An RNA of 177 nucleotides, treated with 2A3 and DMS and read out base by base. 2A3 adducts were read by reverse transcription with SuperScript II with manganese. Values are in units of 0.01, from 0 to 300, in steps of 10. The DMS profile rests on 42,359 reads. For DMS the reverse transcriptase was MarathonRT. Conditions: 150 mM KOAc, 10 mM MgCl2 and 150 mM bicine (pH 8.5), 24 C. The data come from the RNA Mapping Database (RMDB), library OK1LIB.

[RMDB]
RNA sequence: GGGAACGACUCGAGUAGAGUCGAAAAUUAUUACGGUGAUGCACAACGUAUGAUCGACGACCCUGAGGAUGAGAGUGAGGCUGCUGUUUCCCUGCGGUAUCUCAUGCAGCUGAGUCGUCACUUCAGGCGAUUAGCUAUAUUUCGAUAUAGCUAAUCGAAAAGAAACAACAACAACAAC
Reactivity to 2A3 in 0.01 (KOAc 150mM, MgCl2 10mM, bicine 150mM(pH8.5), 24C), signal-to-noise 9, nucleotides 027 to 126: u150u090a060u080u110a030c040g020g030u070g050a100u150g080c070a040c030a180a080c060g030u060a040u120g090a080u080c060g040a030c020g020a030c020c000c010u030g040a060g110g050a130u070g030a030g020a010g070u110g050a050g130g000c010u010g000c010u010g050u050u050u020c000c000c010u030g010c030g020g020u090a130u040c020u010c010a020u100g030c020a020g020c030u040g010a010g050u030c020g020u010c020a020c020u070u080c020a020g090g020
Reactivity to DMS in 0.01 (KOAc 150mM, MgCl2 10mM, bicine 150mM(pH8.5), 24C), signal-to-noise 9, nucleotides 027 to 126: u020u020a050u030u020a040c020g010g010u020g010a110u030g020c120a090c070a060a060c060g010u000a030u000g000a060u010c070g010a130c040g000a050c070c020c000u010g000a090g000g010a070u000g010a140g010a090g020u020g000a150g010g010c020u010g000c000u000g000u010u010u010c010c020c000u010g000c060g000g010u010a060u010c030u010c040a040u010g010c030a060g000c060u010g000a100g010u000c010g000u010c040a060c070u010u020c050a050g010g000